Structure probing data (2A3) for a 207-nucleotide construct.
Conditions: 150 mM KOAc, 10 mM MgCl2 and 150 mM bicine (pH 8.5), 24 C.
Reactivities are given for positions 27 through 156.
The data come from the RNA Mapping Database (RMDB), library RNAMAK.
[RMDB]
RNA sequence: GGGAACGACUCGAGUAGAGUCGAAAAUCCUAAGUCAGGCGAGACGUACUUGGAUUUACGUCUGGAGGUACCUCGGAAACGAGGUACCGAUGAAAGACGUUGUCAGUACGUCGAGCCUGAUAUGGAAAAUCGGAAGAUCCCUUCGGGGAUCUUCCGAGGGUAUGGUAGAGUUCGCUCUACCAUACCCAAAAGAAACAACAACAACAAC
Reactivity to 2A3 in 0.01 (KOAc 150mM, MgCl2 10mM, bicine 150mM(pH8.5), 24C), signal-to-noise 1, nucleotides 027 to 156: u040c000c000u040a130a060g010u000c000a000g000g010c000g000a010g010a000c010g000u000a000c000u080u210g240g060a110u230u140u290a000c020g000u000c000u000g000g020a000g000g000u000a000c000c000u000c000g100g000a150a130a080c010g000a000g000g020u000a000c000c000g000a000u000g020a000a020a000g000a000c020g010u000u000g000u000c000a000g000u000a000c000g000u000c000g000a000g000c000c010u000g000a000u000a030u020g060g020a030a020a150a180u140c010g000g000a000a000g000a000u000c000c000c000u000u060c230g050g000g000g000a000u020c020u000u010c000c000g000a000